[RMDB]
RNA sequence: GGGAACGACUCGAGUAGAGUCGAAAACAAAAAAACUCUUACCACACCCAACCUCACCUUGAACGAGAACAGCCCGUGAUGUGUCAAGAGUUACCUUAAGGUUUCUGAGGUUCUGUUCGCUCACGGCCCAUGAUUAUUUCUUCGGAAAUAAUCAUGGAAAAGAAACAACAACAACAAC
Reactivity to DMS in 0.01 (KOAc 150mM, MgCl2 10mM, bicine 150mM(pH8.5), 24C), signal-to-noise 4, nucleotides 027 to 126: c030a000a010a030a080a060a040a040c050u000c020u010u000a090c050c030a030c020a040c010c000c020a070a070c070c000u010c010a030c030c000u000u010g030a150a090c090g030a070g010a080a120c090a100g000c130c010c000g000u030g010a020u050g020u010g020u040c100a040a020g000a050g000u060u010a040c000c010u010u020a080a050g010g030u010u030u000c010u000g020a030g000g000u000u000c030u010g000u000u000c040g010c020u000c010a010c030g000g010c140
Reactivity to 2A3 in 0.01 (KOAc 150mM, MgCl2 10mM, bicine 150mM(pH8.5), 24C), signal-to-noise 9, nucleotides 027 to 126: c030a010a080a040a010a000a030a060c040u040c020u070u070a050c020c020a030c010a010c030c020c000a030a040c010c010u030c010a060c020c000u060u120g070a080a030c070g020a040g040a130a040c030a040g040c010c020c020g010u020g010a090u210g050u020g040u080c050a050a010g020a010g050u060u060a030c000c000u060u060a100a130g130g010u110u130u100c060u050g010a020g020g000u020u030c010u030g120u110u170c010g000c010u010c000a010c000g020g000c010